[RMDB]
RNA sequence: GGGAACGACUCGAGUAGAGUCGAAAAGCAUCCGCGGCUCAGCCAAGCUGUUGUUUUAAAAGAGCAAUAAAAAUGAAUUAUGACUAAACGCCUUCUAACUUAAUGCUUUCGGACGGGGAUCCCCGGCGCGUAUUAUACUGUUCGCAGUAUAAUACGCAAAAGAAACAACAACAACAAC
Reactivity to 2A3 in 0.01 (KOAc 150mM, MgCl2 10mM, bicine 150mM(pH8.5), 24C), signal-to-noise 1, nucleotides 027 to 126: g030c020a000u040c010c000g000c030g060g020c010u000c070a000g000c010c010a050a010g010c050u000g040u260u040g050u000u060u000u090a090a090a050a030g030a000g030c020a050a030u070a130a070a020a020a000u090g040a060a090u150u070a050u150g000a000c000u020a190a080a050c060g030c010c010u060u000c000u000a070a090c000u010u250a090a010u090g010c000u040u060u030c010g010g000a010c030g040g030g020g040a050u080c050c010c000c030g090g050c050
Reactivity to DMS in 0.01 (KOAc 150mM, MgCl2 10mM, bicine 150mM(pH8.5), 24C), signal-to-noise 2, nucleotides 027 to 126: g020c080a050u000c030c000g020c110g010g020c040u000c050a100g000c020c030a080a060g000c020u000g000u010u000g020u000u000u000u030a060a120a120a140g000a050g030c010a030a050u000a010a030a100a100a150u000g000a170a090u000u000a070u020g000a070c090u010a060a080a170c160g000c010c020u000u000c030u010a090a050c080u000u010a030a090u000g000c060u000u000u000c040g000g010a080c070g020g000g010g000a100u000c040c000c010c070g010g040c170

This 177-nucleotide RNA was probed chemically with 2A3 and DMS.
It was measured as part of the RMDB library RFMREP.
The RNA was probed in 150 mM KOAc, 10 mM MgCl2 and 150 mM bicine (pH 8.5) at 24 C.
For DMS, 1,237 sequencing reads were counted.
For 2A3, 872 sequencing reads were counted.